The data come from the RNA Mapping Database (RMDB), library OK3TST. This 207-nucleotide RNA was probed chemically with 2A3. The RNA was probed in 150 mM KOAc, 10 mM MgCl2 and 150 mM bicine (pH 8.5) at 24 C. Reactivities are given for positions 27 through 156. Values are in units of 0.01, from 0 to 300, in steps of 10. 2A3 adducts were read by reverse transcription with SuperScript II with manganese.
[RMDB]
RNA sequence: GGGAACGACUCGAGUAGAGUCGAAAACGAGUGAUUUGCUGGAUUGCAAUACUUGCGAUAUUUAUUCCAUAUUCUGCGCUUCGUUUCAGACUAUCAAGGAGUAAUCCAAGAACGUAAGCCUCACUGGGGACAUCAUGAUCAUAGAGUUCACGGUCCAGACGUGGAAACAGUUCGCUGUUUCCACGUCAAAAGAAACAACAACAACAAC
Reactivity to 2A3 in 0.01 (KOAc 150mM, MgCl2 10mM, bicine 150mM(pH8.5), 24C), signal-to-noise 1, nucleotides 027 to 156: c050g010a010g040u030g030a110u050u120u150g100c060u030g090g050a170u150u070g000c080a070a050u110a120c010u010u010g010c030g060a030u090a220u030u240u050a080u140u000c050c000a020u010a010u160u010c030u060g070c020g030c060u090u080c100g100u190u040u000c040a040g020a040c040u020a040u160c030a070a080g000g010a040g010u030a000a060u010c090c040a030a090g020a010a000c040g050u060a010a070g030c030c000u030c040a020c100u090g000g000g020g010a000c020a150u120c040a060u090g040a030u040c010a060u150a030g030a030g000u090u010c030a040c070g000g000u030c010c010a020